[RMDB]
The record gives the reactivity of an RNA of 177 nucleotides to DMS and 2A3. 2A3 adducts were read by reverse transcription with SuperScript II with manganese. The reactions ran in a buffer of 150 mM KOAc, 10 mM MgCl2 and 150 mM bicine (pH 8.5), at 24 C.

RNA sequence: GGGAACGACUCGAGUAGAGUCGAAAACGCAACGAAACGAAACAAAUCGUUCAGAAAUACUUGACCACGAGGGCUCCCCUAUAGUCUGCUUUGGCGGUGCGGCAGGCCCCGUGCGAUAGGCUAACUGUUAUGAGCAUGGAUUCGUCCAUGCUCAUAAAAAAGAAACAACAACAACAAC
Reactivity to DMS in 0.01 (KOAc 150mM, MgCl2 10mM, bicine 150mM(pH8.5), 24C), signal-to-noise 7, nucleotides 027 to 126: c080g030c180a030a040c080g020a080a030a030c090g000a070a130a110c300a090a120a110u000c010g010u000u000c020a070g000a110a080a100u020a120c010u000u000g000a300c300c000a030c030g010a060g020g000g000c000u020c080c300c030c030u010a040u020a150g020u040c010u000g020c010u000u050u050g010g010c010g000g020u000g010c220g000g040c120a130g000g000c000c020c000c040g010u000g000c010g000a060u000a000g000g010c140u020a050a110c070u000g020
Reactivity to 2A3 in 0.01 (KOAc 150mM, MgCl2 10mM, bicine 150mM(pH8.5), 24C), signal-to-noise 6, nucleotides 027 to 126: c060g030c080a020a030c030g130a130a020a000c020g050a090a050a050c110a050a190a100u050c010g020u030u030c030a030g130a060a090a030u190a090c010u020u010g010a010c000c000a000c030g040a300g010g010g020c020u140c030c040c000c000u020a030u080a130g170u070c030u020g060c060u150u070u170g140g010c000g000g000u020g000c030g030g010c030a060g040g030c000c000c000c000g000u000g000c010g000a000u000a000g010g010c000u060a110a090c050u060g030